[RMDB]
RNA sequence: GGGAACGACUCGAGUAGAGUCGAAAAGGUGGGGGAUCAGAUCUUGCUUCUUGGAGCAACAACCGGGCCCUGCCCUUGGUUCUCUUCCCUGGCUCAGGGCCCCAGAAGGAGAGCAAACCUGUGACAACGCACGAUUACUUUUCGAAGUAAUCGUGCGAAAAGAAACAACAACAACAAC
Reactivity to DMS in 0.01 (KOAc 150mM, MgCl2 10mM, bicine 150mM(pH8.5), 24C), signal-to-noise 1, nucleotides 027 to 126: g000g100u020g000g020g000g010g020a100u020c070a070g010a040u000c120u000u000g030c020u000u000c050u000u010g030g000a110g010c020a000a090c170a020a130c050c120g020g010g010c000c020c010u020g020c300c030c000u030u000g020g020u010u020c030u000c030u000u010c030c030c010u000g000g010c090u000c040a040g000g000g010c030c040c000c040a010g000a050a150g020g010a040g000a030g010c030a000a110a040c080c030u010g010u010g000a160c250a110a170
Notes
An RNA of 177 nucleotides, treated with DMS and read out base by base. Conditions: 150 mM KOAc, 10 mM MgCl2 and 150 mM bicine (pH 8.5), 24 C. For DMS the reverse transcriptase was MarathonRT. It was measured as part of the RMDB library OK2TRN.